[RMDB]
RNA sequence: GGGAACGACUCGAGUAGAGUCGAAAACGCCUUCGCGUCAGUCGGCGACUUCGCACCUGAUAACGCGGGCAAUUCUCCGGCUCCGCCUAGCGGGCUCACCUUCCUCAAGUCCACGAGGGCCAAGCACACUGAGCAGGGACUUCGGUCCCUGCUCAGUAAAAGAAACAACAACAACAAC
Reactivity to 2A3 in 0.01 (KOAc 150mM, MgCl2 10mM, bicine 150mM(pH8.5), 24C), signal-to-noise 1, nucleotides 027 to 126: c100g000c000c000u080u050c030g000c070g050u040c020a030g080u060c050g040g080c000g200a260c090u170u050c140g010c000a030c000c000u030g000a020u070a140a000c000g000c060g020g000g020c000a000a060u100u020c050u020c000c000g030g050c000u020c020c000g070c000c010u080a030g060c110g030g020g000c010u020c000a050c010c000u000u160c000c060u000c020a100a050g010u080c010c010a050c030g040a200g000g000g000c030c010a050a020g100c030a010c030
The record gives the reactivity of an RNA of 177 nucleotides to 2A3. Reactivities are given for positions 27 through 126. The reactions ran in a buffer of 150 mM KOAc, 10 mM MgCl2 and 150 mM bicine (pH 8.5), at 24 C. Source: RMDB library OK1LIB, as collected in RNAgym.